[RMDB]
RNA sequence: GGGAACGACUCGAGUAGAGUCGAAAACACGCGAAACCCAAAAGUUUCUAUUAGAAGAUAAUAUUGAGUCUAUUCUUUACUCGGACGCCCACGGGCAAACAUACGACGUUGUCACUAUCAUUUUGGACAAGGGGAUAUCGUUCGCGAUAUCCCCUUGAAAAGAAACAACAACAACAAC
Reactivity to DMS in 0.01 (KOAc 150mM, MgCl2 10mM, bicine 150mM(pH8.5), 24C), signal-to-noise 1, nucleotides 027 to 126: c090a020c080g020c080g020a000a030a070c050c010c070a090a020a120a040g040u010u000u010c000u000a070u000u020a080g000a160a180g000a000u000a090a080u000a010u000u020g020a030g000u000c100u000a150u000u010c000u000u000u000a040c040u000c030g000g000a040c070g000c080c000c130a070c010g000g050g000c130a110a010a000c120a110u030a140c180g000a180c080g030u000u030g000u040c080a080c130u010a040u010c140a040u000u010u000u000g000g030a250
Reactivity to 2A3 in 0.01 (KOAc 150mM, MgCl2 10mM, bicine 150mM(pH8.5), 24C), signal-to-noise 2, nucleotides 027 to 126: c070a020c080g070c000g030a050a040a020c030c020c070a000a000a000a120g000u000u050u010c030u000a160u220u190a040g040a120a030g010a030u150a300a050u120a200u110u200g060a040g050u040c030u030a120u120u000c050u000u070u000a020c020u000c010g000g060a000c060g020c000c000c030a060c190g020g010g010c060a050a070a070c000a020u260a040c020g060a000c040g120u000u060g010u030c020a030c040u000a090u120c060a090u030u120u140u100g080g000a000

Chemical mapping of a 177-nucleotide RNA with DMS and 2A3. It was measured as part of the RMDB library OK1LIB. The RNA was probed in 150 mM KOAc, 10 mM MgCl2 and 150 mM bicine (pH 8.5) at 24 C.